[RMDB]
RNA sequence: GGGAACGACUCGAGUAGAGUCGAAAAGGUGCGAAUCACUGUUUGGUCUAAUCCUAGACAUUCUGUGUUCUGUGAGGCAUUCUCAUAAUGGGAAGGCGCGCUAGGAUCAGGUACCUUGCGCCUGUUAAGUGUCUGUUGCAUUCGUGCAGCAGGCGCUAAAAGAAACAACAACAACAAC
Reactivity to DMS in 0.01 (KOAc 150mM, MgCl2 10mM, bicine 150mM(pH8.5), 24C), signal-to-noise 1, nucleotides 027 to 126: g000g000u000g000c060g040a060a100u030c110a020c030u090g010u000u000u010g010g000u000c040u000a040a040u010c070c070u020a030g010a010c020a080u150u000c130u070g000u090g060u030u030c140u000g110u000g060a300g040g000c260a250u000u000c030u010c000a050u030a090a050u010g010g030g000a020a020g000g000c090g010c090g010c050u030a000g000g010a060u010c070a180g000g040u080a160c130c070u010u000g000c240g020c000c000u000g000u040u060a250
Reactivity to 2A3 in 0.01 (KOAc 150mM, MgCl2 10mM, bicine 150mM(pH8.5), 24C), signal-to-noise 5, nucleotides 027 to 126: g070g000u030g020c020g050a060a020u160c040a020c030u170g050u060u030u070g110g000u000c010u030a070a070u060c050c060u030a010g000a020c010a030u080u000c070u140g060u000g030u180u030c060u050g070u070g110a130g140g000c050a110u110u000c010u000c010a100u140a180a100u140g000g000g020a020a050g040g000c030g000c020g020c110u040a020g010g030a070u080c090a070g290g100u280a160c000c000u000u040g000c020g000c000c000u000g060u090u230a130
An RNA of 177 nucleotides, treated with DMS and 2A3 and read out base by base. The RNA was probed in 150 mM KOAc, 10 mM MgCl2 and 150 mM bicine (pH 8.5) at 24 C. DMS adducts were read by reverse transcription with MarathonRT. It was measured as part of the RMDB library OK1LIB.